[RMDB]
The data come from the RNA Mapping Database (RMDB), library OK2TST. This 177-nucleotide RNA was probed chemically with 2A3 and DMS. High DMS reactivity at an A or C suggests that its Watson-Crick edge is free. The 2A3 profile rests on 3,689 reads. For DMS the reverse transcriptase was MarathonRT.

RNA sequence: GGGAACGACUCGAGUAGAGUCGAAAAAAAAAUUGGUCAGUGGAACUUCAGGGUUCAGGCAUCUUUUAGUCAGAAUCACAAUGCCAUUCUUGUCCAAGGAAAUGAAAGUUCUCAGCCAGGUGUACUCCGUACGAUCAAUAUUCGUAUUGAUCGUACGAAAAGAAACAACAACAACAAC
Reactivity to 2A3 in 0.01 (KOAc 150mM, MgCl2 10mM, bicine 150mM(pH8.5), 24C), signal-to-noise 3, nucleotides 027 to 126: a000a000a000a000a000u080u010g010g000u060c040a040g030u070g080g030a040a020c010u040u030c090a060g020g050g020u030u020c030a040g000g010c000a050u060c110u060u260u050u030a040g030u030c030a030g050a050a060u050c020a020c030a250a050u090g030c010c020a030u040u060c040u040u090g060u000c030c010a030a030g040g020a050a130a020u090g020a110a100a000g010u010u010c000u020c010a020g000c010c010a020g000g050u110g020u060a060c030u040c040
Reactivity to DMS in 0.01 (KOAc 150mM, MgCl2 10mM, bicine 150mM(pH8.5), 24C), signal-to-noise 4, nucleotides 027 to 126: a040a020a030a080a060u000u000g020g000u000c020a090g040u000g010g000a070a020c030u010u000c090a090g000g000g000u010u000c040a060g040g010c020a100u010c140u000u000u010u000a150g000u010c040a070g000a030a040u000c030a090c120a070a070u010g000c080c040a070u000u010c050u000u000g000u010c080c050a060a060g010g000a030a050a060u000g000a050a050a070g010u000u000c020u000c050a180g010c040c050a050g000g020u000g010u010a060c080u010c060